Structure probing data (2A3 and DMS) for a 177-nucleotide construct. Conditions: 150 mM KOAc, 10 mM MgCl2 and 150 mM bicine (pH 8.5), 24 C. DMS adducts were read by reverse transcription with MarathonRT. For DMS, 18,226 sequencing reads were counted.

RNA sequence: GGGAACGACUCGAGUAGAGUCGAAAAACAGUGCCGCUGCGCGAGCAGGCGAGCAUCGACACCGCCUUUCGGCUCUCGAUGCUGCAGAGCGCGCGCCAGCAGAGGUGGGACACAGCGCUCGCCUGUGCAGUGCGUAUUUAUUCGUAAAUACGCACUGAAAAGAAACAACAACAACAAC
Reactivity to 2A3 in 0.01 (KOAc 150mM, MgCl2 10mM, bicine 150mM(pH8.5), 24C), signal-to-noise 9, nucleotides 027 to 126: a000c050a030g070u050g110c020c030g030c080u060g000c020g000c000g010a030g000c000a010g120g000c020g020a010g000c000a020u050c010g010a010c040a050c140c030g020c030c020u140u290u210c130g010g000c010u010c000u010c020g060a080u030g000c010u040g000c030a030g030a040g140c010g000c000g000c000g010c050c020a020g000c030a010g020a020g080g030u060g000g020g030a010c060a010c050a150g080c130g010c110u030c020g020c010c000u050g030u060g030
Reactivity to DMS in 0.01 (KOAc 150mM, MgCl2 10mM, bicine 150mM(pH8.5), 24C), signal-to-noise 7, nucleotides 027 to 126: a100c070a100g010u040g020c060c050g010c040u000g020c030g010c010g000a090g010c000a110g000g000c060g000a030g010c000a020u010c030g010a070c270a090c170c160g000c060c030u000u020u030c140g000g000c000u010c130u020c010g010a030u010g010c000u010g000c090a090g010a080g000c010g000c020g020c140g000c040c050a050g020c060a040g010a030g000g020u010g000g000g000a080c050a140c220a170g010c100g000c010u010c010g000c010c000u000g020u010g020